[RMDB]
RNA sequence: GGGAACGACUCGAGUAGAGUCGAAAAGAUAUGGACAUGGACUUCGAUAAGCUGCACUCGGAAACGAGUGGCAGCUUUUGACGAAGUUCCAUGUCCUAAGUCAAAGCGUCACCUUCGGGUGACGCAACUUAUGCAUAGCGUUCGCGCUAUGCAUAAGAAAAGAAACAACAACAACAAC
Reactivity to DMS in 0.01 (KOAc 150mM, MgCl2 10mM, bicine 150mM(pH8.5), 24C), signal-to-noise 5, nucleotides 027 to 126: g000a040u010a300u010g000g010a010c010a000u000g000g000a070c020u000u000c000g020a170u000a030a020g020c010u000g000c000a050c000u010c000g000g000a130a100a230c000g020a000g010u000g010g030c000a000g010c010u000u000u000u000g010a240c120g010a020a010g010u010u000c010c000a010u000g000u000c000c000u000a010a070g010u000c030a100a110a160g010c010g010u000c010a010c000c000u010u010c200g040g010g000u010g000a010c000g010c010a000a020
Reactivity to 2A3 in 0.01 (KOAc 150mM, MgCl2 10mM, bicine 150mM(pH8.5), 24C), signal-to-noise 2, nucleotides 027 to 126: g020a010u040a050u160g000g000a010c000a010u000g000g000a010c010u010u010c030g150a130u060a250a000g000c020u010g000c010a010c010u020c010g010g030a090a080a040c020g000a000g030u000g050g060c000a010g060c030u020u000u000u020g040a030c000g000a010a000g000u010u040c000c000a000u000g000u010c000c010u000a010a000g010u000c020a000a080a140g020c000g000u000c000a010c010c000u040u100c300g110g000g020u000g010a020c010g000c000a000a020